[RMDB]
RNA sequence: GGGAACGACUCGAGUAGAGUCGAAAAGAUAUGGAUCCGAACGGCUUCAACAGCUCGGAAACGAGACAUGAAGUCCGUCGGAUCCUAAGUCAAAAGGCCUCUUUGCACUUCGGUGCAAAGAGGCCAAGCAUACGUACAUCUUCGGAUGUACGUAUGCAAAAGAAACAACAACAACAAC
Reactivity to DMS in 0.01 (KOAc 150mM, MgCl2 10mM, bicine 150mM(pH8.5), 24C), signal-to-noise 2, nucleotides 027 to 126: g000a050u010a300u010g000g000a020u000c000c000g000a100a060c000g000g000c010u020u000c000a020a070c300a160g000c000u000c000g010g000a060a100a170c010g000a020g000a050c080a260u000g000a020a020g010u010c010c020g010u000c000g000g000a010u000c000c000u000a010a060g000u000c010a050a060a110a130g000g040c010c000u010c010u010u000u000g010c020a010c000u020u020c230g020g010u030g010c000a000a030a000g020a010g000g010c000c020a000a020
Reactivity to 2A3 in 0.01 (KOAc 150mM, MgCl2 10mM, bicine 150mM(pH8.5), 24C), signal-to-noise 1, nucleotides 027 to 126: g020a000u030a020u200g010g000a000u000c000c000g000a120a030c000g030g000c010u010u030c020a080a090c050a210g040c000u000c000g000g060a040a040a020c020g020a010g000a020c040a100u100g000a000a000g300u070c030c010g000u010c000g000g000a000u000c000c010u000a000a000g010u000c010a020a000a030a160g000g000c060c010u000c060u070u010u000g010c010a030c010u030u160c300g120g030u000g000c000a000a050a020g000a000g010g000c000c000a000a000